Background
This 207-nucleotide RNA was probed chemically with 2A3 and DMS. The reactions ran in a buffer of 150 mM KOAc, 10 mM MgCl2 and 150 mM bicine (pH 8.5), at 24 C. Values are in units of 0.01, from 0 to 300, in steps of 10. For 2A3 the reverse transcriptase was SuperScript II with manganese. For DMS, 3,300 sequencing reads were counted. DMS adducts were read by reverse transcription with MarathonRT.
RNA sequence: GGGAACGACUCGAGUAGAGUCGAAAAAGUUAGGUUCGCUAUGGUGCAACUCUUUAAGGCAAUAACGAACUAAUUCUAAGCAAGUAAUGGAGAAAUGCCAGGGUCACUAUCUAGCCAUAAUAGUGAUGUAAGUGACUUAGAUUCGUCUAAGUCACAAACCCUUCUCAAUCUUCGGAUUGAGAAGGGUAAAAGAAACAACAACAACAAC
Reactivity to 2A3 in 0.01 (KOAc 150mM, MgCl2 10mM, bicine 150mM(pH8.5), 24C), signal-to-noise 3, nucleotides 027 to 156: a000g090u090u050a060g020g070u000u000c010g020c030u020a010u040g140g030u040g060c030a110a140c080u120c140u120u300u180a090a080g040g000c020a050a060u060a070a030c010g040a010a000c020u010a000a030u100u030c030u150a100a000g030c080a010a100g080u120a090a060u120g080g000a140g060a110a060a040u100g050c000c010a030g050g000g010u010c000a000c020u000a010u070c020u010a020g070c010c000a070u090a150a040u010a060g050u020g020a010u050g070u120a140a100g000u000g000a000c000u000u000a000g010a020u040u000c020g010u040c100u000a000a000g000u000c000a000c000a000a000
Reactivity to DMS in 0.01 (KOAc 150mM, MgCl2 10mM, bicine 150mM(pH8.5), 24C), signal-to-noise 2, nucleotides 027 to 156: a090g020u000u000a080g010g000u000u000c020g030c000u010a030u000g020g030u020g000c020a120a060c080u000c090u000u000u010a070a110g000g020c000a110a050u000a040a000c010g000a000a030c020u010a040a080u000u000c020u000a080a100g010c020a060a100g010u000a110a080u000g020g010a180g000a050a080a120u000g020c070c020a130g010g020g000u010c000a030c000u000a000u000c010u000a130g030c160c130a040u000a040a030u000a010g020u000g000a040u000g020u000a020a140g010u000g000a050c010u000u000a010g000a110u000u010c300g020u000c000u020a000a010g010u020c000a000c000a020a040